[RMDB]
RNA sequence: GGGAACGACUCGAGUAGAGUCGAAAACCUUUAGUUUCCUUCCUCUCCUGGAGAGGUCUUCUGCCCUAGCCCGGUCUUCGAAGCUUCCUUUGGCUACUACCCGGUGGAAACAACUGAAGCUUCAACGCCUUUUUUUCCAAUCUUCUUUAGCACCAGGGUACACAGUUUAGUUCGCUAAACUGUGUACAAAAGAAACAACAACAACAAC
Reactivity to 2A3 in 0.01 (KOAc 150mM, MgCl2 10mM, bicine 150mM(pH8.5), 24C), signal-to-noise 3, nucleotides 027 to 156: c000c000u020u040u090a080g010u050u050u010c020c000u070u050c010c010u030c010u050c020c030u060g000g050a090g000a010g030g010u000c050u110u030c030u050g040c020c020c030u020a040g020c020c030c040g080g000u070c050u100u080c120g030a000a020g010c010u010u040c010c000u010u030u030g050g020c010u030a020c000u050a060c030c040c050g010g010u030g010g050a190a180a050c010a010a010c030u010g020a020a000g000c000u030u020c020a010a020c040g030c020c010u080u070u080u020u030u110u070c030c040a090a130u040c080u130u030c000u020u150u090a100g020c050a090c090c020a020g030g020